[RMDB]
RNA sequence: GGGAACGACUCGAGUAGAGUCGAAAACACUACUUGCAAAUCAGGAGAAAGUUUUAGAGCUUGCGAAACAGAAGGCUGAGAUUGGCGAUCAGAUUGUUAAGCAGCAGCAGUUGAACGCUCUUACCGAUAAAUCACUGAAAUUUGUUAAUGAUUUGACGAAAACGUACCAUUUCGAUGGUACGUUUUCAAAAGAAACAACAACAACAAC
Reactivity to 2A3 in 0.01 (KOAc 150mM, MgCl2 10mM, bicine 150mM(pH8.5), 24C), signal-to-noise 2, nucleotides 027 to 156: c080a010c000u180a020c000u040u110g010c000a000a030a190u070c030a050g030g030a070g050a040a070a030g030u090u070u030u070a100g000a010g000c040u070u090g000c070g050a050a000a030c030a020g110a160a010g060g000c010u040g000a070g040a190u080u090g010g000c030g010a030u040c010a020g040a090u020u030g030u030u020a060a050g070c030a000g020c010a010g000c010a000g040u070u060g030a020a030c040g000c010u010c000u030u050a040c000c010g010a040u080a080a100a030u070c030a040c070u070g030a010a110a160u060u080u140g010u060u080a030a010u100g040a050u050u000u080g050a040c050
Reactivity to DMS in 0.01 (KOAc 150mM, MgCl2 10mM, bicine 150mM(pH8.5), 24C), signal-to-noise 2, nucleotides 027 to 156: c040a200c010u010a040c070u000u030g020c040a080a080a070u000c050a100g010g000a210g000a180a090a080g040u020u010u000u050a010g000a070g060c040u010u010g030c020g020a270a100a160c070a120g000a090a090g040g030c000u010g020a110g070a190u000u010g030g030c010g000a120u010c050a070g040a200u000u000g040u000u010a050a170g020c050a100g030c020a070g000c050a070g010u000u010g000a020a160c020g000c020u000c040u010u000a170c070c020g000a090u010a040a050a050u000c020a120c010u020g000a000a100a150u000u000u010g020u000u000a100a090u000g010a140u000u000u010g000a150c190
The record gives the reactivity of an RNA of 207 nucleotides to 2A3 and DMS. 2A3 adducts were read by reverse transcription with SuperScript II with manganese. DMS adducts were read by reverse transcription with MarathonRT.